[RMDB]
RNA sequence: GGGAACGACUCGAGUAGAGUCGAAAAGUUUGAGGUUCGCCUCAAACAAAACCUUUGUGUGUGAGUAAAGCACAUGGACGUAUAUGCCCAUUGGGCAUGCAAACAUGUGAACUACUUUCUCACACACUCUGGUAAAACUACUGACUUCGGUCAGUAGCGUUGUUUUCGGGUUCGCCCGAAAACAACGAAAAGAAACAACAACAACAAC
Reactivity to 2A3 in 0.01 (KOAc 150mM, MgCl2 10mM, bicine 150mM(pH8.5), 24C), signal-to-noise 1, nucleotides 027 to 156: g000u000u000u000g030a060g080g040u070u160c260g120c060c030u030c000a000a000a030c040a030a050a000a000c000c000u000u020u050g020u010g030u000g000u000g000a030g000u300a000a010a010g040c010a000c000a000u000g000g000a020c090g090u050a120u000a030u300g000c000c060c090a190u280u300g010g000g030c000a000u000g020c000a110a160a220c000a010u000g000u000g020a000a030c030u060a050c000u210u040u020c030u000c000a030c000a000c020a000c000u000c000u000g000g000u020a060a040a030a050c000u020a000c000u000g000a000c000u060u020c300g060g000u000c000a000g010u000a000g000
Chemical mapping of a 207-nucleotide RNA with 2A3.
The RNA was probed in 150 mM KOAc, 10 mM MgCl2 and 150 mM bicine (pH 8.5) at 24 C.